Chemical mapping of a 207-nucleotide RNA with 2A3 and DMS. Source: RMDB library M2RFOK, as collected in RNAgym. The reactions ran in a buffer of 150 mM KOAc, 10 mM MgCl2 and 150 mM bicine (pH 8.5), at 24 C. As a SHAPE reagent, 2A3 marks flexible, mostly unpaired nucleotides at the ribose 2'-OH.

RNA sequence: GGGAACGACUCGAGUAGAGUCGAAAAAGCACGGUUUUUGAGGACGCAUUUUGUCCGUGCGGUAAUGCACUCCUUUACACUUUCUCGCAUGGUGCGGGAGUGUGGAGAGGAAACAAAAGCUAGUCUCGAUAGGCGGUUAACUUCGGUUAACCGCCAACGCUGCUUUAUAGUUCGCUAUAAAGCAGCGAAAAGAAACAACAACAACAAC
Reactivity to 2A3 in 0.01 (KOAc 150mM, MgCl2 10mM, bicine 150mM(pH8.5), 24C), signal-to-noise 4, nucleotides 027 to 156: a000g020c000a000c000g010g010u000u000u020u000u010g080a070g020g010a020c030g030c100a100u000u000u010u040g000u000c010c000g000u010g000c020g020g060u160a110a050u200g050c070a040c050u030c000c010u010u040u040a010c010a000c000u100u130u020c020u020c020g030c020a120u270g250g040u290g120c010g000g000g000a010g000u020g000u010g000g010a030g000a000g000g020a030a030a010c010a000a010a000a010g030c040u070a030g010u010c010u000c050g040a090u110a140g000g000c010g000g010u000u000a000a010c000u030u060c160g000g000u000u000a000a000c010c000g000c000c000a000a000
Reactivity to DMS in 0.01 (KOAc 150mM, MgCl2 10mM, bicine 150mM(pH8.5), 24C), signal-to-noise 1, nucleotides 027 to 156: a100g000c000a020c000g020g020u000u000u050u020u000g000a030g020g010a030c020g010c130a140u020u000u000u000g030u010c000c000g050u000g020c000g020g020u000a000a000u020g000c050a060c040u000c000c000u000u000u000a040c020a010c010u000u000u010c000u000c020g020c020a160u020g000g040u000g100c010g000g010g000a020g000u010g040u000g020g000a060g010a040g010g000a120a070a060c040a020a040a030a030g000c040u000a110g020u000c010u010c080g000a170u010a070g010g020c000g030g000u000u010a010a040c010u000u000c300g040g020u000u000a010a030c000c010g040c000c000a000a000